[RMDB]
RNA sequence: GGGAACGACUCGAGUAGAGUCGAAAAAAGCAUGUCUCUCUAUUGUCUCUCUAUUCAGAACUUAGUAUGGUGAUGGAUCGAUAGAGAGACAUUCCUGCAUCUGUCAUCCAUCUCCAUAAAAACAAAAACUAGUUCUCUUGUUCGCAAGAGAACUAGUAAAAGAAACAACAACAACAAC
Reactivity to 2A3 in 0.01 (KOAc 150mM, MgCl2 10mM, bicine 150mM(pH8.5), 24C), signal-to-noise 1, nucleotides 027 to 126: a000a030g080c050a080u090g000u000c020u010c000u000c030u040a030u010u040g080u000c020u020c010u000c040u150a170u200u140c090a080g050a140a080c060u080u110a090g100u050a140u050g000g000u030g000a000u020g000g000a010u070c030g000a000u000a000g010a000g020a030g030a000c000a000u010u000c000c000u010g000c000a050u040c010u140g170u110c000a010u000c000c010a000u000c000u010c000c000a030u010a010a120a010a010a000c070a000a070a090a020
Reactivity to DMS in 0.01 (KOAc 150mM, MgCl2 10mM, bicine 150mM(pH8.5), 24C), signal-to-noise 2, nucleotides 027 to 126: a110a060g010c170a030u000g000u000c020u000c000u010c020u000a060u000u000g030u020c070u000c050u010c080u000a100u000u000c120a140g010a040a110c190u010u000a130g000u000a000u000g000g000u000g000a000u010g030g000a070u000c130g030a040u000a010g000a000g010a040g020a010c020a000u000u000c010c020u000g020c110a130u010c170u020g020u010c070a040u000c000c000a010u000c010u000c000c000a020u000a030a030a020a090a070c140a040a100a050a100
Structure probing data (2A3 and DMS) for a 177-nucleotide construct. For 2A3 the reverse transcriptase was SuperScript II with manganese. The RNA was probed in 150 mM KOAc, 10 mM MgCl2 and 150 mM bicine (pH 8.5) at 24 C.